The record gives the reactivity of an RNA of 177 nucleotides to DMS and 2A3. For 2A3, 13,826 sequencing reads were counted.

RNA sequence: GGGAACGACUCGAGUAGAGUCGAAAAAAGGAAAUGAAUAUGAUGUUCAGAAAAUGCUUAGUGCACAUUUCGACUUCUCAAUAGAGAGAGACGAUAGAAUGGACAGUUUGAUAAAGUGCAUCAUGACCUUUUCUAAUUCAUUCGUGAAUUAGAAAAGAAAAGAAACAACAACAACAAC
Reactivity to DMS in 0.01 (KOAc 150mM, MgCl2 10mM, bicine 150mM(pH8.5), 24C), signal-to-noise 9, nucleotides 027 to 126: a060a060g010g010a100a100a080u010g010a080a060u010a050u010g020a060u000g010u000u000c020a070g010a090a070a120a080u000g000c050u010u000a070g020u000g010c230a030c040a080u000u000u000c010g010a130c030u000u010c000u000c010a100a110u010a130g000a070g000a040g000a030g010a070c040g010a080u010a050g010a040a040u000g000g010a070c070a070g010u000u000u000g010a090u000a050a100a080g010u000g010c010a020u000c040a030u000g000a140c120
Reactivity to 2A3 in 0.01 (KOAc 150mM, MgCl2 10mM, bicine 150mM(pH8.5), 24C), signal-to-noise 9, nucleotides 027 to 126: a000a010g180g010a110a100a060u150g030a070a040u160a030u160g020a010u020g010u030u030c030a020g170a090a090a010a020u120g010c020u100u120a050g030u090g060c020a020c010a090u020u060u030c020g020a030c020u130u030c010u020c000a080a300u300a080g090a000g000a000g000a000g010a020c010g010a020u030a080g150a080a040u020g000g020a010c020a050g060u040u080u040g110a110u090a050a110a010g020u030g010c000a000u010c000a010u040g070a070c000